[RMDB]
RNA sequence: GGGAACGACUCGAGUAGAGUCGAAAACGCUUGGAGUUCAGUUCGCGGAUCAGAAAGGCUUGUUUGUCCGCUUCAGACCAGCUUUCAUAAUCACCGAGGCCCAGAUAGCGGGUCAGUUCAGCAAUAGCAAGCCAUGAAGGUUCGCCUUCAUGGCUUGAAAAGAAACAACAACAACAAC
Reactivity to DMS in 0.01 (KOAc 150mM, MgCl2 10mM, bicine 150mM(pH8.5), 24C), signal-to-noise 1, nucleotides 027 to 126: c050g030c090u000u000g030g000a090g030u000u000c090a100g030u020u000c060g030c050g030g000a030u010c150a090g000a070a030a080g000g040c030u000u000g030u000u000u000g040u010c110c050g020c100u010u010c020a100g010a030c020c010a020g020c030u000u030u000c040a090u020a100a090u000c040a110c050c040g010a060g020g010c020c000c070a050g030a120u000a080g010c030g000g010g010u000c020a100g000u000u010c020a100g000c060a050a080u040a100g000